This 170-nucleotide RNA was probed chemically with DMS and 2A3. 2A3 adducts were read by reverse transcription with SuperScript II with manganese.
RNA sequence: GGGAACGACUCGAGUAGAGUCGAAAACCUGUUGUAGAAUCGUUGAGCGCAACGUCGUACGUGCUGCUCUUCUUGCCGGUUCAUUUGACAAAGUCUAUGAUAUUGGCAAUCCUAAAGGAAUUCCUAUAAACUAGUACGUUCGCGUACUAGAAAAGAAACAACAACAACAAC
Reactivity to DMS in 0.01 (KOAc 150mM, MgCl2 10mM, bicine 150mM(pH8.5), 24C), signal-to-noise 3, nucleotides 027 to 129: c010c010u030g030u000u000g000u000a100g000a010a010u030c060g000u030u010g030a080g070c000g000c010a060a030c010g040u000c230g060u100a300c040g070u000g020c000u030g000c000u010c010u040u030c080u000u000g000c020c010g030g040u000u000c000a000u050u030u000g020a010c000a130a130a160g010u000c000u050a000u000g030a000u000a040u010u000g010g030c000a000a000u030c010c020u000a000a060a090g020g000a090a060u000u000c020c060u000a060u040a060a000a110
Reactivity to 2A3 in 0.01 (KOAc 150mM, MgCl2 10mM, bicine 150mM(pH8.5), 24C), signal-to-noise 9, nucleotides 027 to 129: c000c000u040g050u030u020g030u050a020g010a030a030u030c040g020u000u020g000a000g010c020g000c070a140a210c080g090u120c140g120u220a110c010g000u000g020c030u090g000c000u000c000u000u000c010u000u010g000c020c010g000g000u010u010c010a030u170u090u120g030a040c120a140a210a020g000u000c000u000a010u010g020a020u030a020u250u040g000g000c000a010a000u020c000c000u170a110a070a040g020g010a010a020u020u030c010c020u040a040u140a100a100a030

Overview: The data come from the RNA Mapping Database (RMDB), library 15KLIB. The 2A3 profile rests on 18,338 reads.